[RMDB]
RNA sequence: GGGAACGACUCGAGUAGAGUCGAAAAGCUAAUGAGGUGAUGCUUGAGGGGCCCCUAGAUAGCUGUGGGACGGGGCUGGUUGCCAGAGGAACCAGCCACGUGAUUAGAGGGUUGGAACUUUAGCUCCCAACGUUCCUUCAUUCGUGAAGGAACGUUGAAAAGAAACAACAACAACAAC
Reactivity to 2A3 in 0.01 (KOAc 150mM, MgCl2 10mM, bicine 150mM(pH8.5), 24C), signal-to-noise 1, nucleotides 027 to 126: g000c010u040a190a000u160g060a050g080g050u090g030a080u150g050c060u080u050g030a160g060g000g010g060c030c050c050c000u050a080g080a300u150a110g040c060u030g020u180g080g020g030a020c030g030g000g000g000c030u000g000g020u020u060g120c070c040a130g000a190g150g050a010a010c000c030a000g000c000c030a010c020g000u010g010a040u030u180a040g030a100g070g030g000u160u140g050g040a050a030c000u040u110u000a020g030c080u050c020c020
Reactivity to DMS in 0.01 (KOAc 150mM, MgCl2 10mM, bicine 150mM(pH8.5), 24C), signal-to-noise 2, nucleotides 027 to 126: g010c030u010a030a040u000g020a100g000g040u020g010a190u000g000c070u000u010g010a160g030g000g010g020c050c040c010c030u010a100g010a120u010a090g030c070u010g000u000g030g010g000a060c020g010g010g010g010c010u000g000g000u000u000g000c040c160a130g010a150g020g010a030a040c000c010a020g010c000c000a020c010g010u000g010a120u000u010a100g010a070g020g020g010u010u000g010g000a060a130c100u000u010u000a070g010c040u000c030c030

The record gives the reactivity of an RNA of 177 nucleotides to 2A3 and DMS. For 2A3, 927 sequencing reads were counted. The reactions ran in a buffer of 150 mM KOAc, 10 mM MgCl2 and 150 mM bicine (pH 8.5), at 24 C.